Source: RMDB library OK3TST, as collected in RNAgym. Structure probing data (2A3) for a 207-nucleotide construct. 2A3 adducts were read by reverse transcription with SuperScript II with manganese. For 2A3, 774 sequencing reads were counted. The RNA was probed in 150 mM KOAc, 10 mM MgCl2 and 150 mM bicine (pH 8.5) at 24 C. Values cover nucleotides 27 to 156. Reactivities are rounded to 0.1 and cut off at 0 and 3. As a SHAPE reagent, 2A3 marks flexible, mostly unpaired nucleotides at the ribose 2'-OH.
[RMDB]
RNA sequence: GGGAACGACUCGAGUAGAGUCGAAAACUGAGCGAGGCGCGGGAGAAGGCCGUCUUGCUGGACGAGGACGAUGACUUGUGGGUGGAGCUUCGCCACAUGCAUAUCGCAGAUGUGUCCAAGUGCGUGCACACGGGGACCGGAUCCCCCCCCCACCGCCAGACAGAACCAAUUUCGAUUGGUUCUGUCUAAAAGAAACAACAACAACAAC
Reactivity to 2A3 in 0.01 (KOAc 150mM, MgCl2 10mM, bicine 150mM(pH8.5), 24C), signal-to-noise 1, nucleotides 027 to 156: c080u080g010a030g070c010g030a050g000g040c030g000c020g030g010g030a080g000a080a100g050g050c010c000g040u050c020u040u090g110c080u110g090g030a020c050g000a020g050g020a050c030g000a050u010g030a040c080u130u070g020u090g000g050g010u070g060g070a010g080c040u120u150c040g020c010c000a000c000a010u080g000c030a050u100a030u200c050g030c130a110g040a210u090g070u030g010u090c050c000a020a120g090u060g030c080g110u100g000c010a000c000a020c090g030g000g020g080a030c040c020g020g040a130u080c000c010c000c000c000c000c000c000c000a000c000c020g020c040c020